Structure probing data (DMS and 2A3) for a 177-nucleotide construct. Values are in units of 0.01, from 0 to 300, in steps of 10. For DMS, 2,937 sequencing reads were counted. Source: RMDB library OK2TRN, as collected in RNAgym.
[RMDB]
RNA sequence: GGGAACGACUCGAGUAGAGUCGAAAACUCACACUGUUGGCCAGCCUGGAAUGCAGUGGCAUGAUCUUGGCUUACUGCAGCCUCCGCCUCCCGGAUUCAAGCAAUUCUCGUGCCUCAGCCUUACAAGCUCCCUUGAUGUAUUCGUACAUCAAGGGAGAAAAGAAACAACAACAACAAC
Reactivity to DMS in 0.01 (KOAc 150mM, MgCl2 10mM, bicine 150mM(pH8.5), 24C), signal-to-noise 3, nucleotides 027 to 126: c020u000c040a160c170a130c120u010g020u000u000g000g000c030c040a100g010c040c020u000g020g010a070a080u000g010c000a030g000u010g000g000c020a070u000g000a060u000c110u000u010g000g000c020u000u000a030c040u000g010c020a060g000c070c040u020c040c030g020c080c030u000c010c010c020g000g010a100u000u000c070a050a070g010c090a040a080u010u000c040u000c030g010u010g000c020c020u000c050a070g010c020c030u000u000a080c160a090a180g010
Reactivity to 2A3 in 0.01 (KOAc 150mM, MgCl2 10mM, bicine 150mM(pH8.5), 24C), signal-to-noise 2, nucleotides 027 to 126: c000u020c000a020c010a010c020u040g090u160u060g050g040c010c020a010g020c020c040u020g030g060a110a080u050g000c010a010g040u010g060g040c020a020u110g110a200u140c050u160u190g030g010c020u030u220a020c020u050g030c010a010g010c000c000u020c010c000g000c000c010u030c020c000c000g000g020a060u130u070c040a060a020g030c010a040a030u080u020c020u010c040g050u070g010c030c010u030c020a010g000c010c000u060u070a080c040a090a030g010